Record summary:
The record gives the reactivity of an RNA of 177 nucleotides to DMS and 2A3. For 2A3, 10,720 sequencing reads were counted.
RNA sequence: GGGAACGACUCGAGUAGAGUCGAAAAGCCUCUAGCGUUUGGAAAACGCUGUUUGCGCAAUGAUCUGGAUUUAGCGCAAGUAGGUCCGAAAUCCAGAUCAACAUUUCGGACAACCGCGCUAAUUAAAGUAGAGAUACACAUUCGUGUGUAUCUCUACAAAAGAAACAACAACAACAAC
Reactivity to DMS in 0.01 (KOAc 150mM, MgCl2 10mM, bicine 150mM(pH8.5), 24C), signal-to-noise 8, nucleotides 027 to 126: g000c020c010u000c140u010a030g020c010g020u000u000u010g010g000a140a110a060a050c070g010c010u000g000u000u000u000g010c050g020c050a120a100u010g010a070u000c010u000g000g010a130u000u000u000a060g020c020g010c010a040a070g020u010a060g010g010u000c010c010g010a030a020a030u000c060c060a070g000a130u000c150a060a070c170a070u000u000u000c020g000g010a040c010a060a120c070c090g010c020g000c020u000a020a040u010u010a050a080a130
Reactivity to 2A3 in 0.01 (KOAc 150mM, MgCl2 10mM, bicine 150mM(pH8.5), 24C), signal-to-noise 6, nucleotides 027 to 126: g040c000c010u030c040u040a010g010c010g000u040u100u130g130g030a110a120a010a000c020g010c030u010g030u020u090u060g030c040g000c030a090a130u130g030a070u060c030u060g070g020a060u040u080u130a040g000c010g010c020a000a020g060u080a050g070g060u020c020c030g000a010a000a010u000c040c020a030g020a070u030c000a000a010c010a010u040u050u040c020g010g000a000c020a050a030c040c030g020c010g000c020u050a050a090u170u110a150a100a020
Source: RMDB library M2PK90, as collected in RNAgym. The reactions ran in a buffer of 150 mM KOAc, 10 mM MgCl2 and 150 mM bicine (pH 8.5), at 24 C.